[RMDB]
RNA sequence: GGGAACGACUCGAGUAGAGUCGAAAAUUUUGAAUAGUCAAAAAAUUCUGUAUCCUCACCUGAACAUGGUAACAAAAUUGCAUAUAGAAUUUCCUUCAUCAGUAAAAUUUGUCACAGAGGAUGGAAAAAUAGUCCAUUUAUUCGUAAAUGGACUAUUAAAAGAAACAACAACAACAAC
Reactivity to DMS in 0.01 (KOAc 150mM, MgCl2 10mM, bicine 150mM(pH8.5), 24C), signal-to-noise 5, nucleotides 027 to 126: u010u030u000u010g000a070a210u030a120g010u030c030a010a020a040a030a070a060u010u010c010u000g010u000a020u010c020c020u000c050a070c040c020u000g010a120a090c200a070u020g000g010u000a080a060c110a040a030a060a040u010u010g010c100a040u020a040u000a070g000a030a030u000u010u010c040c060u000u030c060a040u010c070a050g000u000a030a030a050a070u010u020u000g000u010c100a040c140a100g000a040g010g000a020u000g010g000a010a060a070
Reactivity to 2A3 in 0.01 (KOAc 150mM, MgCl2 10mM, bicine 150mM(pH8.5), 24C), signal-to-noise 5, nucleotides 027 to 126: u050u050u010u010g040a070a070u160a200g120u160c100a050a010a020a040a020a060u080u000c040u090g080u080a040u010c000c010u010c020a020c010c010u030g060a080a030c030a090u080g040g010u070a080a020c040a020a030a070a040u120u080g000c060a030u130a010u040a140g070a060a030u010u020u080c010c000u010u060c030a090u010c020a030g050u110a020a040a090a200u100u140u100g080u060c020a050c030a120g010a030g070g000a010u020g030g000a030a120a000